[RMDB]
RNA sequence: GGGAACGACUCGAGUAGAGUCGAAAAACCAGGGCCAUACGGCUGCAACACCCCUACAAGUGCCGGUAGGUGUGGGCUGAGACCAUCCUACAUGGGGAAGGCCCUGAGAGGCCGGGAAUUUGCAGGCACGGACUCUGUAUUUCGAUACAGAGUCCGUAAAAGAAACAACAACAACAAC
Reactivity to DMS in 0.01 (KOAc 150mM, MgCl2 10mM, bicine 150mM(pH8.5), 24C), signal-to-noise 1, nucleotides 027 to 126: a140c100c010a130g010g000g000c030c050a220u010a070c160g010g020c000u000g010c060a080a170c060a150c000c030c000c040u020a030c090a090a160g000u010g000c040c040g020g050u010a020g010g000u000g000u000g000g020g000c020u000g010a180g010a170c010c020a030u000c020c040u010a090c040a100u010g070g020g010g020a150a300g010g020c010c000c010u010g000a070g000a110g000g010c000c020g000g010g030a060a120u010u010u000g010c090a090g010g030c140
Conditions: 150 mM KOAc, 10 mM MgCl2 and 150 mM bicine (pH 8.5), 24 C. This 177-nucleotide RNA was probed chemically with DMS. Values cover nucleotides 27 to 126. For DMS the reverse transcriptase was MarathonRT.